[RMDB]
RNA sequence: GGGAACGACUCGAGUAGAGUCGAAAACGAUUUGCCCAUCUAAUGCCACGUUCUGUGGCCGUUCUAUGAUCUACAAGUCGAGGAUGAUUUAGAUGAGUAGUGAGUUGCAUGUACCGCAAUGUCUGGGCGCUUUGUCCCGUCAGCUCUUGCCACUGUCGAUGUAUUCCUCGUUCGCGAGGAAUACAUCAAAAGAAACAACAACAACAAC
Reactivity to DMS in 0.01 (KOAc 150mM, MgCl2 10mM, bicine 150mM(pH8.5), 24C), signal-to-noise 2, nucleotides 027 to 156: c070g010a220u010u000u000g020c030c040c020a040u000c030u010a050a020u000g040c000c020a020c050g020u020u010c080u010g040u020g000g050c030c040g040u000u000c030u060a080u010g030a060u000c030u000a140c220a060a210g050u010c010g010a060g020g050a060u000g010a120u010u000u000a030g020a060u010g010a080g030u000a060g010u030g000a110g030u000u000g000c000a100u000g030u000a120c020c050g050c040a050a090u000g020u020c050u010g010g020g000c010g020c130u010u000u010g000u020c010c020c010g040u010c040a120g000c040u010c030u010u000g000c010c030a200c050u000g020u000c060
Reactivity to 2A3 in 0.01 (KOAc 150mM, MgCl2 10mM, bicine 150mM(pH8.5), 24C), signal-to-noise 4, nucleotides 027 to 156: c040g050a070u050u030u160g030c000c000c000a000u040c020u030a020a080u140g010c000c000a040c070g120u300u140c200u300g030u000g000g000c000c010g010u000u000c030u060a240u140g010a080u040c020u100a120c060a300a010g010u030c030g010a010g020g010a020u030g000a010u050u070u110a040g030a040u040g030a010g040u060a020g030u030g140a050g000u010u020g040c070a050u070g060u200a110c080c000g000c070a060a080u080g020u020c050u140g020g020g030c030g000c100u150u060u170g030u040c010c000c000g030u010c020a050g010c010u030c000u050u020g010c010c030a060c070u120g010u110c130